[RMDB]
RNA sequence: GGGAACGACUCGAGUAGAGUCGAAAAGUUACAGCUUCGGCUGUAACAAAAAAUCCUAAGUCAGCAACUAUUUGUCAGCGUUUCCAUCGGAAACGAUGGGCGCUUGGAUUUAACGAAUUGCUGAUAUGGAAAAAAACACGGGUUUCGACCCGUGUAAUCUAUGUCCUCUGUUCGCAGAGGACAUAGAAAAAGAAACAACAACAACAAC
Reactivity to 2A3 in 0.01 (KOAc 150mM, MgCl2 10mM, bicine 150mM(pH8.5), 24C), signal-to-noise 1, nucleotides 027 to 156: g000u000u000a000c000a020g000c000u030u040c230g130g020c000u000g000u000a020a010c000a000a000a000a000a000a000u040c000c000u050a060a000g000u000c000a000g020c020a030a030c060u140a030u270u040u060g110u040c000a000g000c010g000u030u300u140c000c000a000u000c010g080g080a250a080a050c010g000a000u000g020g030g040c000g040c000u070u200g020g020a000u040u140u250a040a030c070g030a170a300u030u000g000c000u000g000a000u000a010u040g020g100a100a280a000a000a000a000a000c010a020c140g000g020g090u060u070u100c210g220a020c000c000c000g000u000g000u000a030a000
Chemical mapping of a 207-nucleotide RNA with 2A3. For 2A3 the reverse transcriptase was SuperScript II with manganese. Values cover nucleotides 27 to 156.